[RMDB]
RNA sequence: GGGAACGACUCGAGUAGAGUCGAAAAGGAGGCUUCGAACUCCCACCUGACCGCCCCCUGGGGCGGCGGGUCACCGGUCAGACGGUCCCGUCCCGAGGCGGCGAUCCGUCCGAAUGCGCGCCCCGCGCUUAGUGAGUCAAUUCGUUGACUCACUAAGAAAAGAAACAACAACAACAAC
Reactivity to 2A3 in 0.01 (KOAc 150mM, MgCl2 10mM, bicine 150mM(pH8.5), 24C), signal-to-noise 9, nucleotides 027 to 126: g030g020a020g020g020c080u120u080c190g070a060a030c010u020c010c000c000a020c000c000u080g130a290c000c000g010c010c000c000c000c100u290g030g000g000g000c010g000g000c010g000g000g000u020c020a040c050c020g020g040u070c040a020g000a050c000g010g010u010c010c010c000g020u050c040c070c070g060a260g020g000c010g000g010c070g020a040u070c020c010g010u010c000c010g060a070a040u140g020c030g000c000g010c020c010c000c010g030c000g000
Reactivity to DMS in 0.01 (KOAc 150mM, MgCl2 10mM, bicine 150mM(pH8.5), 24C), signal-to-noise 9, nucleotides 027 to 126: g000g000a030g000g010c050u030u040c150g000a090a070c030u000c000c010c120a080c010c010u000g010a130c010c010g000c000c000c000c020c190u030g010g010g010g010c020g010g010c010g000g000g010u010c110a080c090c030g000g010u010c080a070g000a040c020g000g010u000c030c000c000g010u000c010c120c160g010a120g000g000c030g000g000c140g000a020u030c000c010g010u000c010c030g010a070a070u020g000c030g010c090g000c040c010c010c070g010c100g010
Record summary
Chemical mapping of a 177-nucleotide RNA with 2A3 and DMS. Reactivities are given for positions 27 through 126. Source: RMDB libraries RFM100 and RFMREP, as collected in RNAgym.